RNA sequence: GGGAACGACUCGAGUAGAGUCGAAAACACGACGCUGGUUCAGACUAUCAAGCCUCUACGAGUUCGAUCAUCGUCUGGCUCGGGCGCAUGAUGAACGGCACCGUGGAUAUGGAAGCGUUGAACGCGAGCGGUCAUUAAUGUUCGCAUUAAUGACCGCAAAAGAAACAACAACAACAAC
Reactivity to 2A3 in 0.01 (KOAc 150mM, MgCl2 10mM, bicine 150mM(pH8.5), 24C), signal-to-noise 2, nucleotides 027 to 126: c020a000c050g100a010c040g000c020u140g040g100u060u080c020a040g060a170c060u080a100u220c060a080a080g070c010c040u040c020u050a050c050g040a020g060u060u120c040g060a030u030c020a060u040c050g060u030c060u080g100g000c040u050c000g060g000g000c000g000c030a020u070g040a010u030g000a030a020c000g020g000c020a000c060c030g010u010g000g040a050u070a090u210g090g050a030a050g030c040g030u050u110g060a130a000c040g020c020g050a020
Reactivity to DMS in 0.01 (KOAc 150mM, MgCl2 10mM, bicine 150mM(pH8.5), 24C), signal-to-noise 2, nucleotides 027 to 126: c080a100c050g020a060c030g010c020u000g060g020u000u000c030a090g010a190c140u010a170u010c120a130a130g000c070c060u000c040u010a140c050g000a070g000u000u000c090g010a050u000c090a070u010c100g010u000c070u020g000g000c040u020c080g000g000g010c260g020c110a050u000g000a060u000g000a020a040c000g010g000c090a040c080c000g020u000g000g000a090u010a130u010g000g010a110a070g020c010g010u000u000g020a070a130c050g010c070g020a140